RNA sequence: GGGAACGACUCGAGUAGAGUCGAAAAGCUCGAACCCCAUGUCCAGCGCGCUAUCGCGCACCUCCUUGCCGGCGAUCAGCGCCAGCAACUGCUCCGCCGCGCGCCGGCCGAUGGCUUCGCGCGGGGACAUCCCUAGCGUAUUCGUACGCUAGGGAUGAAAAGAAACAACAACAACAAC
Reactivity to DMS in 0.01 (KOAc 150mM, MgCl2 10mM, bicine 150mM(pH8.5), 24C), signal-to-noise 4, nucleotides 027 to 126: g020c060u010c030g010a070a190c080c020c000c020a060u000g000u010c060c050a110g020c050g000c040g020c170u010a080u010c050g020c070g020c040a180c080c040u000c050c050u000u010g030c040c030g020g020c000g000a170u000c160a080g000c020g020c010c050a060g010c030a070a050c160u010g000c080u000c010c020g020c020c000g000c030g000c080g020c130c160g000g000c000c010g000a140u010g020g020c010u010u010c020g020c000g010c000g050g010g000g000a060
Reactivity to 2A3 in 0.01 (KOAc 150mM, MgCl2 10mM, bicine 150mM(pH8.5), 24C), signal-to-noise 4, nucleotides 027 to 126: g070c040u020c100g050a100a080c000c010c010c020a040u120g080u060c070c080a060g010c040g000c010g000c120u210a090u300c050g000c000g000c050a030c000c020u050c000c000u030u050g020c020c010g040g000c020g040a150u130c140a040g210c010g020c020c000a000g030c010a010a100c060u110g030c020u030c010c040g260c040c000g000c030g010c000g000c030c060g000g050c010c000g180a170u240g010g010c010u020u030c010g000c000g000c030g000g000g020g000a010
Source: RMDB library OK2TST, as collected in RNAgym.
An RNA of 177 nucleotides, treated with DMS and 2A3 and read out base by base.
The 2A3 profile rests on 4,548 reads.
The DMS profile rests on 3,525 reads.
For 2A3 the reverse transcriptase was SuperScript II with manganese.
For DMS the reverse transcriptase was MarathonRT.